[RMDB]
RNA sequence: GGGAACGACUCGAGUAGAGUCGAAAAGUCAGCUACGGCUACCGGAUGGGUGCGGCCAAGAUCGCCGAAAUGCUGCGGUGGUGCCACGAAGCCGGCAUCGAACUGGCCACCGUCUAUCUGCUGUCCAGUGCAGUUUAGCUUUCGAGCUAAACUGCACAAAAGAAACAACAACAACAAC
Reactivity to DMS in 0.01 (KOAc 150mM, MgCl2 10mM, bicine 150mM(pH8.5), 24C), signal-to-noise 1, nucleotides 027 to 126: g020u000c040a090g030c040u010a060c080g010g000c030u020a030c150c030g000g000a050u000g010g020g000u000g030c100g020g000c020c040a080a130g010a100u020c160g000c020c000g020a090a070a070u030g060c090u020g010c040g000g000u000g040g010u000g000c060c080a060c050g000a110a060g000c150c060g000g000c010a030u000c020g000a080a100c200u010g000g000c000c040a070c060c030g020u000c060u010a010u040c020u010g020c060u000g030u000c000c010a150
Reactivity to 2A3 in 0.01 (KOAc 150mM, MgCl2 10mM, bicine 150mM(pH8.5), 24C), signal-to-noise 1, nucleotides 027 to 126: g030u030c030a010g030c050u080a050c100g100g030c010u050a040c060c000g010g020a020u040g050g020g030u050g070c070g020g000c000c010a030a030g090a080u090c050g010c010c010g060a120a160a150u300g040c070u030g030c030g000g010u060g000g010u060g060c020c010a010c070g050a020a030g090c040c000g010g000c000a010u020c030g000a100a080c050u040g000g000c000c010a020c030c010g000u010c000u010a050u000c040u040g000c010u020g020u090c040c010a000